[RMDB]
This 207-nucleotide RNA was probed chemically with DMS and 2A3. The 2A3 profile rests on 3,952 reads.
RNA sequence: GGGAACGACUCGAGUAGAGUCGAAAAAGUUAGGUUCGCUAUGGUGCAACUCUUUAAGGCAAUAACGAACUAAUUCUAAGCAAGUAGUGGAGAAAUGCCAGGGUCACUAUCUAGCCAUAAUAGUGCUGUAAGUGACUUAGAUUCGUCUAAGUCACAAUGUUUUCUAAGUAUUCGUACUUAGAAAACAAAAAGAAACAACAACAACAAC
Reactivity to DMS in 0.01 (KOAc 150mM, MgCl2 10mM, bicine 150mM(pH8.5), 24C), signal-to-noise 3, nucleotides 027 to 156: a080g020u000u010a070g020g020u000u000c030g010c040u010a040u010g010g050u000g010c030a070a090c100u010c080u010u000u000a080a070g020g020c030a090a070u020a050a090c020g010a080a050c010u000a030a050u000u010c040u010a100a130g030c050a040a080g000u000a060g010u000g020g010a110g000a050a080a140u000g020c050c030a120g020g010g000u000c030a040c030u000a040u000c040u000a090g010c040c010a100u010a050a150u010a080g020u000g010c030u010g020u010a060a120g020u000g000a020c000u000u000a010g010a080u000u010c300g020u000c000u000a000a010g010u000c000a010c010a050a060
Reactivity to 2A3 in 0.01 (KOAc 150mM, MgCl2 10mM, bicine 150mM(pH8.5), 24C), signal-to-noise 5, nucleotides 027 to 156: a000g110u090u050a030g040g040u030u030c020g020c040u020a010u080g090g030u040g040c060a100a100c030u070c060u100u220u160a090a070g030g000c030a050a060u070a080a010c040g030a010a010c010u010a000a030u090u040c050u130a080a030g040c040a090a020g030u040a000g000u060g060g040a060g050a100a130a030u060g010c000c020a030g020g000g000u040c000a010c020u010a010u150c020u020a020g020c010c000a030u070a150a040u050a120g100u070g020c030u030g040u130a190a050g010u010g000a000c000u000u000a000g000a000u040u010c090g010u000c150u000a000a000g000u000c000a000c000a010a000

2A3 adducts were read by reverse transcription with SuperScript II with manganese.
Reactivities are given for positions 27 through 156.
The DMS profile rests on 6,756 reads.